[RMDB]
RNA sequence: GGGAACGACUCGAGUAGAGUCGAAAAUAUGACACCAUACUGCCAUGAUCCUACUGUUUUGCCUGGGGCUUUUGCGUACAGUCAGAUGAGGCCUCAUGUUCGUUACGACUUGUAUGAUGGUAACAUGAAAGAUUCUACUUCGGUAGAAUCAAAAGAAACAACAACAACAAC
Reactivity to DMS in 0.01 (KOAc 150mM, MgCl2 10mM, bicine 150mM(pH8.5), 24C), signal-to-noise 8, nucleotides 027 to 129: u000a080u020g020a070c090a050c040c030a020u050a100c080u050g070c050c060a000u030g020a000u040c030c010u000a010c160u030g030u040u030u030u020g030c060c040u000g060g000g030g030c090u000u010u000u010g040c120g040u050a220c050a080g020u040c070a090g000a100u000g000a090g010g010c060c040u040c070a060u020g000u020u020c060g030u000u060a060c070g020a090c110u010u010g000u000a090u000g000a060u000g030g010u000a030a060c050a100u040g000a120a110a130
Reactivity to 2A3 in 0.01 (KOAc 150mM, MgCl2 10mM, bicine 150mM(pH8.5), 24C), signal-to-noise 9, nucleotides 027 to 129: u300a070u100g040a030c030a010c030c010a020u040a100c040u050g020c010c010a030u060g030a060u050c010c000u020a080c030u070g060u100u070u110u120g030c010c010u030g010g010g020g000c000u040u060u080u110g050c050g030u120a100c050a120g030u090c020a030g070a190u080g030a050g020g020c000c000u020c010a030u070g040u050u090c080g030u030u050a040c050g020a060c070u070u080g040u070a090u100g100a030u070g060g020u040a030a030c000a040u090g070a060a050a030